This 177-nucleotide RNA was probed chemically with DMS and 2A3. For DMS, 1,064 sequencing reads were counted. As a SHAPE reagent, 2A3 marks flexible, mostly unpaired nucleotides at the ribose 2'-OH.
[RMDB]
RNA sequence: GGGAACGACUCGAGUAGAGUCGAAAAGAAGCCUCCCAAGAGGAGAAAAGGGAGCAUUCAAGAGGCGGGUGAGAUCCCCAUGACGCUGGAGACAUCCUGGAAGGGGAAAGAGGAUGGGUGGAAAAGACUAAUCUUGUUACUUCGGUAACAAGAUUAGAAAAGAAACAACAACAACAAC
Reactivity to DMS in 0.01 (KOAc 150mM, MgCl2 10mM, bicine 150mM(pH8.5), 24C), signal-to-noise 2, nucleotides 027 to 126: g030a110a130g020c220c050u010c010c000c000a100a060g010a150g020g020a100g000a030a120a120a090g000g000g030a060g010c060a080u010u000c060a110a170g000a180g010g000c160g000g020g010u010g010a090g000a110u010c010c010c010c030a110u010g020a130c140g000c070u000g010g010a080g010a080c300a050u010c020c000u010g000g000a140a140g020g000g010g020a020a090a030g000a090g000g000a060u010g000g000g000u000g010g000a050a060a020a100g000a150
Reactivity to 2A3 in 0.01 (KOAc 150mM, MgCl2 10mM, bicine 150mM(pH8.5), 24C), signal-to-noise 2, nucleotides 027 to 126: g050a010a000g080c000c030u010c040c010c010a060a030g180a070g170g100a050g040a090a110a050a100g000g000g010a020g010c010a080u090u140c060a060a050g040a140g130g040c120g040g050g000u050g060a100g010a070u040c000c000c000c000a060u090g020a040c090g000c210u020g030g000a010g010a030c050a040u040c010c020u070g010g080a050a080g030g000g000g040a020a100a040g040a040g030g050a060u100g060g000g050u070g000g000a050a070a030a010g030a010

For 2A3, 1,724 sequencing reads were counted.